The record gives the reactivity of an RNA of 177 nucleotides to 2A3 and DMS. As a SHAPE reagent, 2A3 marks flexible, mostly unpaired nucleotides at the ribose 2'-OH. Reactivities are given for positions 27 through 126. DMS adducts were read by reverse transcription with MarathonRT. The data come from the RNA Mapping Database (RMDB), library OK1LIB. The RNA was probed in 150 mM KOAc, 10 mM MgCl2 and 150 mM bicine (pH 8.5) at 24 C.

RNA sequence: GGGAACGACUCGAGUAGAGUCGAAAAGAAGUGGCAGGGACAUGCCCCAAAAGCUCGUUCUAGCAACAUAUGUUUGGCUAGUUCGAGCGAUUAGUCUCGAGGAGCGUCCUCUCGCCUCUUCACGAGAACUAGGAUCAGUAUUCGUACUGAUCCUAGUAAAAGAAACAACAACAACAAC
Reactivity to 2A3 in 0.01 (KOAc 150mM, MgCl2 10mM, bicine 150mM(pH8.5), 24C), signal-to-noise 9, nucleotides 027 to 126: g000a010a000g000u010g000g000c000a000g010g010g000a010c030a060u290g010c000c000c000c010a030a070a020a010g000c000u000c000g000u010u000c000u010a000g010c020a020a060c030a100u300a080u300g160u110u100u110g140g030c000u000a000g010u000u000c010g000a000g000c000g000a000u010u040a020g100u020c060u050c220g060a210g000g020a130g010c010g000u000c000c010u080c020u040c080g000c000c000u010c000u000u000c010a020c060g150a130g040a030
Reactivity to DMS in 0.01 (KOAc 150mM, MgCl2 10mM, bicine 150mM(pH8.5), 24C), signal-to-noise 6, nucleotides 027 to 126: g010a030a020g010u000g000g020c010a070g010g000g010a010c040a090u050g010c010c000c020c050a050a040a130a190g000c010u000c000g010u000u000c000u000a000g010c010a040a030c050a210u040a130u050g010u010u010u020g020g010c010u000a000g020u000u000c000g010a000g010c000g020a030u020u030a090g010u040c090u020c150g010a180g000g000a150g020c090g010u000c020c000u020c050u030c190g010c000c000u000c000u000u000c010a190c110g010a100g020a130